Source: RMDB library OK2TST, as collected in RNAgym.
An RNA of 177 nucleotides, treated with DMS and 2A3 and read out base by base.
For DMS the reverse transcriptase was MarathonRT.
Reactivities are given for positions 27 through 126.
RNA sequence: GGGAACGACUCGAGUAGAGUCGAAAACUAAGCUGAGUGGGGACAGGAUCCCAUUGGCGUUGGAGGAUGAGCUAAGGGACUUCUUGGACGCCCUUGUUAUCUCUAUAUUGGUGAAAACGGGGGUUCACUAAAUACGUGGGUUCGCCCACGUAUUUAGAAAAGAAACAACAACAACAAC
Reactivity to DMS in 0.01 (KOAc 150mM, MgCl2 10mM, bicine 150mM(pH8.5), 24C), signal-to-noise 6, nucleotides 027 to 126: c060u010a080a120g020c050u000g010a060g020u000g010g010g010g010a140c070a100g010g000a230u000c020c010c020a090u000u000g010g010c040g010u010u010g010g010a090g000g010a070u000g010a110g010c050u010a070a070g010g000g000a090c120u010u000c040u000u000g010g000a060c140g020c010c010c020u010u010g010u000u000a070u000c020u000c030u000a110u010a170u010u010g010g020u000g010a020a050a020a040c050g010g000g000g010g010u000u000c060a190
Reactivity to 2A3 in 0.01 (KOAc 150mM, MgCl2 10mM, bicine 150mM(pH8.5), 24C), signal-to-noise 2, nucleotides 027 to 126: c000u050a060a030g050c030u030g070a020g050u060g020g000g000g000a010c030a080g110g000a110u040c000c010c020a060u010u060g030g010c060g060u050u070g050g070a050g060g030a050u100g050a030g030c030u030a030a060g010g030g000a030c040u040u000c000u080u080g040g020a010c030g160c000c020c000u030u040g000u020u020a060u020c010u000c020u000a050u030a120u300u300g070g000u080g040a030a040a000a010c010g030g000g020g000g000u030u020c020a030